[RMDB]
RNA sequence: GGGAACGACUCGAGUAGAGUCGAAAAGUCAGCUUGUUCGCAAGCUGACAAACUGGACACUCCCACACCCAGGCGAAGCCGUGUCAAAAUGGGUGUGGGUAAAAAGGACACUGUUCGCAGUGUCCAACCUAAAACACCACUUCGGUGGUGUUUUAGGAAAAGAAACAACAACAACAAC
Reactivity to DMS in 0.01 (KOAc 150mM, MgCl2 10mM, bicine 150mM(pH8.5), 24C), signal-to-noise 2, nucleotides 027 to 126: g000u000c010a040g000c000u000u010g000u020u010c200g000c000a010a020g020c000u000g000a010c000a010a050a080c070u000g000g010a080c140a120c140u000c000c000c010a000c020a000c010c000c010a030g000g000c150g020a090a070g020c080c110g000u000g000u000c110a070a060a230a250u000g000g010g000u000g010u010g010g000g020u000a000a000a100a130a020g010g000a040c000a030c030u000g000u000u000c200g030c000a010g020u000g000u000c000c000a020a010
Reactivity to 2A3 in 0.01 (KOAc 150mM, MgCl2 10mM, bicine 150mM(pH8.5), 24C), signal-to-noise 2, nucleotides 027 to 126: g010u000c000a000g000c000u040u020g050u070u100c160g040c120a000a000g010c000u000g020a000c000a010a000a000c020u050g090g080a020c020a020c130u040c000c000c000a000c010a000c020c000c000a020g060g010c070g120a120a020g140c150c090g190u160g030u110c010a210a140a060a160u050g000g000g000u000g000u010g000g000g000u000a000a010a000a000a000g000g000a000c010a000c010u010g040u090u080c250g000c080a000g000u010g000u000c000c000a000a000